[RMDB]
RNA sequence: GGGAACGACUCGAGUAGAGUCGAAAAUUAUUAAUUCUAUUCUUUUACUUAUUUAGUGAUGGAUUACGUGAUGCAUUUGAUCCGAAAAUGCGUAAAUAAAAGGGGGCAUAGCAUAUGACUGAAAGAAGCAAUAAUGCAGAUUCGUCUGCAUUAUUGCAAAAGAAACAACAACAACAAC
Reactivity to DMS in 0.01 (KOAc 150mM, MgCl2 10mM, bicine 150mM(pH8.5), 24C), signal-to-noise 1, nucleotides 027 to 126: u040u070a100u050u040a040a070u010u010c030u050a050u000u000c010u020u000u000u000a020c040u020u000a070u020u030u010a010g030u010g000a090u020g000g000a020u000u020a050c140g000u000g010a050u030g020c000a040u000u000u000g000a030u010c050c060g110a150a010a040a040u000g000c030g010u040a020a110a080u010a040a050a110a070g120g030g000g030g000c120a070u000a040g010c090a040u020a120u040g000a050c010u020g000a090a070a020g020a160a130
Reactivity to 2A3 in 0.01 (KOAc 150mM, MgCl2 10mM, bicine 150mM(pH8.5), 24C), signal-to-noise 2, nucleotides 027 to 126: u120u090a010u000u210a080a220u100u000c000u000a080u070u070c000u000u090u040u060a050c000u070u110a200u300u200u100a050g020u010g080a080u070g000g090a040u020u070a080c110g050u090g130a120u100g100c060a020u000u040u080g070a030u060c000c070g010a070a100a000a000u040g000c000g100u070a030a120a000u260a030a090a040a020g000g000g000g000g000c040a020u060a060g000c000a040u040a110u210g030a090c020u000g050a000a050a150g130a070a000